[RMDB]
RNA sequence: GGGAACGACUCGAGUAGAGUCGAAAAGAAAGAAGAAAGGACCUCGGCGAUUAGCUUACGCGAAUAAAUCGUCAGUCUCGAGUGAGGUCCAAAAACGAGACUGACAAAAAGAAAAAGAAAAAGAAAAACUACCUACGUGAUUCGUCACGUAGGUAGUAAAAGAAACAACAACAACAAC
Reactivity to 2A3 in 0.01 (KOAc 150mM, MgCl2 10mM, bicine 150mM(pH8.5), 24C), signal-to-noise 3, nucleotides 027 to 126: g210a000a110a040g140a000a010g090a060a120a020g000g000a000c000c000u000c000g040g000c010g130a270u020u170a010g020c100u110u130a100c060g020c000g040a080a030u150a210a050a070u200c090g000u010c000a000g000u000c000u000c000g040a000g060u150g000a000g000g000u000c000c000a050a160a000a000a000c010g000a000g000a000c000u000g000a000c010a000a040a010a000a010g130a040a000a000a040a010g160a040a090a020a000a010g080a060a030a010a000
Reactivity to DMS in 0.01 (KOAc 150mM, MgCl2 10mM, bicine 150mM(pH8.5), 24C), signal-to-noise 1, nucleotides 027 to 126: g090a140a060a130g030a070a100g020a180a190a210g000g000a040c040c000u010c060g050g020c030g000a030u000u040a080g000c210u000u000a000c010g000c030g050a110a070u030a050a120a140u050c100g010u000c000a000g050u000c000u000c000g020a150g000u010g050a020g000g100u050c010c010a000a070a120a080a060c000g000a070g010a000c000u050g000a000c000a010a000a130a120a050g020a050a150a020a100a140g000a000a100a050a010a110g030a030a050a080a080

Chemical mapping of a 177-nucleotide RNA with 2A3 and DMS. It was measured as part of the RMDB library OK1LIB. The reactions ran in a buffer of 150 mM KOAc, 10 mM MgCl2 and 150 mM bicine (pH 8.5), at 24 C. High DMS reactivity at an A or C suggests that its Watson-Crick edge is free.